[RMDB]
RNA sequence: GGGAACGACUCGAGUAGAGUCGAAAACGCACUCGCAGCUUAAUAACCUGCGCUGAGCCCUUCUCCCCCAGCUUGCCUGUGUCCUAGGGAAUUGGAAGGUCAUCCUUCACAGGAUCGUGUGCAAGUCAUUACUCGUGAGUGUUCGCACUCACGAGAAGAAAAGGAGUUACUUCGGUAACUCCUUUUCAAAAGAAACAACAACAACAAC
Reactivity to 2A3 in 0.01 (KOAc 150mM, MgCl2 10mM, bicine 150mM(pH8.5), 24C), signal-to-noise 3, nucleotides 027 to 156: c050g000c010a030c040u020c000g000c020a010g000c010u030u020a040a000u050a040a040c010c010u000g050c020g060c200u070g020a030g020c050c020c000u190u050c030u060c000c000c000c010c010a000g000c000u000u020g010c000c010u090g000u000g020u170c000c000u000a060g060g090g040a130a150u190u130g090g030a030a050g050g000u130c070a100u180c050c000u000u010c020a030c000a060g000g010a010u020c030g030u020g060u130g070c000a000a010g000u000c010a050u020u230a080c000u000c000g000u000g010a000g000u020g020u080u050c150g030c050a000c020u000c000a010c000g000a000g000a000a020
Reactivity to DMS in 0.01 (KOAc 150mM, MgCl2 10mM, bicine 150mM(pH8.5), 24C), signal-to-noise 2, nucleotides 027 to 156: c070g040c010a090c030u000c000g000c020a000g010c040u000u000a150a120u010a120a120c250c000u010g000c020g060c090u000g000a070g000c010c020c030u000u000c030u000c010c000c020c040c030a140g010c020u010u000g010c030c020u000g020u020g010u000c020c010u000a170g030g020g000a070a150u010u000g020g010a060a110g010g010u010c140a150u000c000c000u020u000c030a160c090a070g020g000a050u000c060g030u000g000u000g030c000a060a060g010u000c040a060u000u010a190c010u000c000g030u010g010a020g050u020g000u000u000c300g060c030a030c000u000c000a000c000g010a000g020a040a080

The data come from the RNA Mapping Database (RMDB), library M2RFPK. Chemical mapping of a 207-nucleotide RNA with 2A3 and DMS. For 2A3 the reverse transcriptase was SuperScript II with manganese. For DMS the reverse transcriptase was MarathonRT. Values cover nucleotides 27 to 156. The reactions ran in a buffer of 150 mM KOAc, 10 mM MgCl2 and 150 mM bicine (pH 8.5), at 24 C.